[RMDB]
RNA sequence: GGGAACGACUCGAGUAGAGUCGAAAAGAAAGAGCCUGAAUACGGAGAACCGUAACGCAUGACCGAAUAUUCAGCCCAGUUCACGACGUAAGUCGUGCGCCCGAGUCUUCCUCUGGGCGCUGGGGUCACGUACAUGCGUCAGGCAGGAGGAAGAGAAAAUUUACGAGCCAUUCGUGGCUCGUAAAUUAAAAGAAACAACAACAACAAC
Reactivity to 2A3 in 0.01 (KOAc 150mM, MgCl2 10mM, bicine 150mM(pH8.5), 24C), signal-to-noise 1, nucleotides 027 to 156: g090a090a180a010g030a030g010c000c020u000g080a120a080u050a050c000g000g020a110g130a280a210c000c000g000u000a020a020c010g010c010a000u020g010a030c050c000g040a160a100u180a210u120u150c180a060g050c000c000c000a040g070u200u100c030a010c000g000a010c040g080u120a060a180g010u000c000g010u010g000c050g010c000c000c000g020a010g130u000c020u030u030c000c000u020c050u070g000g020g000c000g000c010u010g000g000g010g000u040c090a010c050g050u110a100c000a000u000g000c000g020u000c010a000g010g000c000a010g010g020a000g000g000a010a000g010a000g070a060a170
Reactivity to DMS in 0.01 (KOAc 150mM, MgCl2 10mM, bicine 150mM(pH8.5), 24C), signal-to-noise 1, nucleotides 027 to 156: g000a060a130a190g000a210g060c020c000u000g020a080a230u000a030c000g010g010a250g000a140a170c030c040g020u000a030a250c040g040c000a020u000g000a120c000c030g000a030a200u000a170u020u000c140a220g050c010c000c000a110g000u010u010c000a030c020g060a030c010g060u020a160a260g000u010c000g060u000g000c080g030c030c000c020g010a010g000u000c020u000u000c000c030u000c030u000g030g050g030c020g030c040u000g000g020g050g020u010c050a030c050g000u010a150c020a020u000g000c050g000u020c060a030g000g040c080a060g000g000a010g010g020a030a040g000a190g010a100a170
Overview: The record gives the reactivity of an RNA of 207 nucleotides to 2A3 and DMS. DMS adducts were read by reverse transcription with MarathonRT. The RNA was probed in 150 mM KOAc, 10 mM MgCl2 and 150 mM bicine (pH 8.5) at 24 C.